[RMDB]
RNA sequence: GGGAACGACUCGAGUAGAGUCGAAAAACCUACGGAAAUCCCUGUGUUCCUCGGAUGUCCAGGCCGUCCCCUCUUCUAGAGAAGGGAGACUCCGGAACUCCUUCCAUGGUUGGGACGAAGCCGCCGCGUAGCGGCGAUAGUUCGCUAUCGCCGCUACAAAAGAAACAACAACAACAAC
Reactivity to 2A3 in 0.01 (KOAc 150mM, MgCl2 10mM, bicine 150mM(pH8.5), 24C), signal-to-noise 1, nucleotides 027 to 126: a010c020c000u020a060c050g020g030a000a200a090u050c000c010c030u020g050u020g030u140u080c030c000u000c030g020g000a040u060g030u090c060c060a050g010g010c010c000g010u010c000c020c010c020u000c030u080u040c050u130a120g020a000g000a200a070g040g060g010a030g030a040c000u050c160c110g090g000a050a060c030u000c010c000u030u030c000c000a080u100g070g000u010u020g000g010g020a000c000g030a060a010g020c030c040g080c030c050g080c160
Reactivity to DMS in 0.01 (KOAc 150mM, MgCl2 10mM, bicine 150mM(pH8.5), 24C), signal-to-noise 2, nucleotides 027 to 126: a090c010c000u000a050c090g010g000a070a080a080u010c030c010c060u000g000u010g000u000u020c050c020u010c240g020g000a050u000g010u000c030c040a190g010g000c040c020g010u000c010c010c010c050u010c020u010u010c110u000a130g010a170g020a020a020g000g020g000a030g000a120c050u010c150c060g000g010a100a170c030u010c010c010u000u010c000c030a100u000g000g020u000u000g010g000g010a030c000g000a080a080g020c000c040g060c120c190g040c300